Conditions: 150 mM KOAc, 10 mM MgCl2 and 150 mM bicine (pH 8.5), 24 C. This 207-nucleotide RNA was probed chemically with DMS and 2A3. DMS adducts were read by reverse transcription with MarathonRT. Reactivities are given for positions 27 through 156. For 2A3, 3,477 sequencing reads were counted.
RNA sequence: GGGAACGACUCGAGUAGAGUCGAAAAGCUUAAUAACCUGCUCUGAGCCCUUCUCCCCCAGCUUGCCUGUGUCCUAGGGAAUUGGAAGGUCAUCCUUCACAGGAUCGUGUGGAAGUCCUGCUCGGGGUCCAAACAUGGUAAUUCGUUACCAUGUUAAUUCGUAAUAAUGGUUCGCCAUUAUUACGAAAAAAGAAACAACAACAACAAC
Reactivity to DMS in 0.01 (KOAc 150mM, MgCl2 10mM, bicine 150mM(pH8.5), 24C), signal-to-noise 3, nucleotides 027 to 156: g010c070u000u010a100a140u020a060a120c040c020u010g010c020u000c050u010g020a050g000c010c030c060u000u000c040u000c010c010c000c030c040a100g030c050u000u000g010c070c030u010g020u000g010u010c060c030u010a140g020g030g010a090a120u000u010g010g000a070a030g020g030u000c080a150u000c000c010u000u000c080a090c030a040g010g000a030u010c070g010u000g030u000g010g040a130a090g010u000c040c000u000g000c010u000c060g030g020g020g040u010c030c050a090a040a010c000a020u000g000g020u000a010a060u000u000c280g040u000u000a020c010c010a010u010g000u000u000a040a150
Reactivity to 2A3 in 0.01 (KOAc 150mM, MgCl2 10mM, bicine 150mM(pH8.5), 24C), signal-to-noise 3, nucleotides 027 to 156: g020c020u100u100a070a020u040a200a160c010c030u020g020c010u000c010u060g020a010g000c020c020c020u050u060c110u050c020c010c010c010c010a010g000c010u040u120g030c000c010u030g000u000g020u080c010c040u040a040g030g010g020a050a050u110u060g050g020a050a030g030g010u070c030a040u060c030c000u050u080c010a000c010a030g040g020a090u070c050g040u070g020u030g130g000a040a020g000u030c030c020u010g020c000u000c010g010g000g040g000u020c030c030a050a040a000c000a000u010g000g010u010a000a010u050u050c030g000u000u010a000c000c000a000u000g000u000u000a010a070